Chemical mapping of a 177-nucleotide RNA with DMS and 2A3. The reactions ran in a buffer of 150 mM KOAc, 10 mM MgCl2 and 150 mM bicine (pH 8.5), at 24 C. High 2A3 reactivity points to a flexible backbone, as in loops and unpaired stretches.

RNA sequence: GGGAACGACUCGAGUAGAGUCGAAAACUCGGCGUGGAAGAAACGAGAGAGCGCUUCGUAGUAGAGCCCGAGGCCGUCGCGGGUGGCCGGAAGCGUAGGGAAGGCCACGUCGCCGUGGGCGCGAAUGUCUUGUAGCACGGUUCGCCGUGCUACAAGAAAAAGAAACAACAACAACAAC
Reactivity to DMS in 0.01 (KOAc 150mM, MgCl2 10mM, bicine 150mM(pH8.5), 24C), signal-to-noise 2, nucleotides 027 to 126: c010u000c040g050g010c030g000u010g000g000a120a090g000a070a130a110c080g020a150g000a150g020a160g020c040g000c020u030u050c050g010u000a060g040u000a090g030a270g010c060c010c020g000a090g000g020c050c040g010u000c060g010c020g020g010g010u000g010g020c040c020g000g010a090a070g010c070g010u000a140g010g020g000a190a160g010g010c000c000a010c040g000u010c060g030c040c070g030u000g010g010g000c010g000c070g000a040a060u020g000
Reactivity to 2A3 in 0.01 (KOAc 150mM, MgCl2 10mM, bicine 150mM(pH8.5), 24C), signal-to-noise 1, nucleotides 027 to 126: c010u010c030g050g000c060g010u030g030g030a130a060g020a170a300a050c110g020a080g000a000g030a050g060c000g000c060u080u040c050g030u060a120g020u030a030g050a030g070c030c000c020g000a110g020g090c060c000g020u030c050g020c000g000g090g020u020g000g060c020c060g040g050a030a010g100c070g040u070a040g040g090g000a030a030g000g000c030c020a050c030g090u100c000g010c000c010g070u060g000g030g000c060g030c050g080a080a060u170g010